[RMDB]
RNA sequence: GGGAACGACUCGAGUAGAGUCGAAAAGCCAGGCCAUGGCUGCUCAGAUACAUGGGCCCAUGAAAUUGAUGAACUGAGAGCUGCUUCCAGCCCUGCGCGCACCAUCUGGAAUUCCAGUCUGAGGUUAUCCUGUGCAAAAAUUCGUUUUUGCACAGGAAAAAGAAACAACAACAACAAC
Reactivity to 2A3 in 0.01 (KOAc 150mM, MgCl2 10mM, bicine 150mM(pH8.5), 24C), signal-to-noise 4, nucleotides 027 to 126: g040c010c000a020g010g030c050c000a040u030g010g010c050u070g010c010u030c020a020g020a090u130a150c080a100u070g020g020g030c000c000c010a040u070g070a030a130a100u210u180g050a090u060g020a080a040c030u040g020a010g000a010g120c020u030g010c000u050u000c020c020a010g000c000c000c020u030g000c060g000c000g010c000a030c020c000a050u070c030u020g030g050a070a060u130u050c020c010a020g030u000c030u060g030a020g060g000u030u040a030
Reactivity to DMS in 0.01 (KOAc 150mM, MgCl2 10mM, bicine 150mM(pH8.5), 24C), signal-to-noise 5, nucleotides 027 to 126: g000c030c020a050g000g000c160c050a050u010g000g010c080u010g020c020u010c020a040g000a180u020a090c160a070u000g010g020g000c010c010c010a060u010g000a050a080a070u020u010g000a090u010g010a070a080c040u010g010a090g000a120g000c030u000g000c060u000u010c060c010a100g000c050c020c020u000g020c060g010c060g000c030a100c030c020a050u000c020u020g020g020a120a100u030u020c100c020a050g010u030c050u000g010a070g020g010u010u010a120
Structure probing data (2A3 and DMS) for a 177-nucleotide construct.
The RNA was probed in 150 mM KOAc, 10 mM MgCl2 and 150 mM bicine (pH 8.5) at 24 C.
Source: RMDB libraries RFM100 and RFMREP, as collected in RNAgym.
Values cover nucleotides 27 to 126.